[RMDB]
RNA sequence: GGGAACGACUCGAGUAGAGUCGAAAACUGUCGGAAGAUGGUCAGUCCCGGGUGCAUAAGGAGUGGUGGAUGGUUCAGGACCGAAAGGUAGCAGACAAAAGCCACCGCGCGGUGCAGUGGCCGGACUUCACGUAACCAAUUUCGAUUGGUUACGUGAAAAAGAAACAACAACAACAAC
Reactivity to 2A3 in 0.01 (KOAc 150mM, MgCl2 10mM, bicine 150mM(pH8.5), 24C), signal-to-noise 4, nucleotides 027 to 126: c030u030g020u040c010g010g110a060a040g020a150u070g020g020u050c040a010g040u080c050c020c010g030g000g000u060g000c030a030u060a180a120g070g010a070g030u020g020g010u020g010g060a060u060g050g000u040u020c020a000g000g030a010c000c000g010a050a040a010g020g000u010a010g020c010a000g010a020c020a020a270a020a020g020c000c000a010c000c000g000c010g000c010g030g000u040g010c020a050g040u070g100g040c030c010g010g010a020c000u000
Reactivity to DMS in 0.01 (KOAc 150mM, MgCl2 10mM, bicine 150mM(pH8.5), 24C), signal-to-noise 3, nucleotides 027 to 126: c030u010g020u000c040g000g040a110a080g000a050u010g000g000u000c060a090g010u010c020c010c000g000g020g020u010g010c030a040u020a100a080g030g030a170g040u010g010g000u000g020g020a080u010g000g000u000u010c020a300g000g000a000c010c040g000a070a050a100g010g040u000a040g000c010a200g000a040c040a050a050a110a120g020c000c000a000c000c000g010c020g000c050g000g020u010g010c010a020g010u010g010g030c020c030g010g000a100c150u000